[RMDB]
Chemical mapping of a 177-nucleotide RNA with 2A3 and DMS. Reactivities are rounded to 0.1 and cut off at 0 and 3. Conditions: 150 mM KOAc, 10 mM MgCl2 and 150 mM bicine (pH 8.5), 24 C. It was measured as part of the RMDB library RFMREP.
RNA sequence: GGGAACGACUCGAGUAGAGUCGAAAAGGCAUGGUUUCGACCAUGCCAAAGCGUGACGCCGGGCCCCUCUGACGGUUUGCAGCCGCCAUGUCGGAGUCAUAGUAAAAGAUGAUACUUCGGUAUCAUCCUACCCCUCUAUGUUCGCAUAGAGGGGUAGAAAAGAAACAACAACAACAAC
Reactivity to 2A3 in 0.01 (KOAc 150mM, MgCl2 10mM, bicine 150mM(pH8.5), 24C), signal-to-noise 2, nucleotides 027 to 126: g000g010c010a020u010g000g030u010u050u170c180g070a010c010c000a010u000g000c010c000a000a020a000g020c020g020u040g020a010c020g020c020c000g000g050g040c050c000c000c000u010c010u020g030a030c010g060g020u000u020u140g020c010a000g040c000c020g000c020c000a090u180g080u080c010g000g030a030g020u010c010a020u080a100g170u160a060a090a010a060g000a030u000g000a000u000a020c010u030u050c160g070g010u020a000u010c000a000u020c000
Reactivity to DMS in 0.01 (KOAc 150mM, MgCl2 10mM, bicine 150mM(pH8.5), 24C), signal-to-noise 2, nucleotides 027 to 126: g000g010c000a010u000g000g000u010u000u000c180g000a030c020c000a020u000g030c000c000a000a010a070g000c070g000u010g020a030c040g010c000c000g000g000g010c030c000c010c080u010c050u000g000a020c020g010g000u000u000u000g010c210a190g000c000c000g020c000c020a020u010g010u000c020g000g010a050g000u000c030a020u000a100g020u020a040a080a100a130g000a000u000g000a020u000a010c000u000u010c160g020g020u010a000u010c010a000u000c000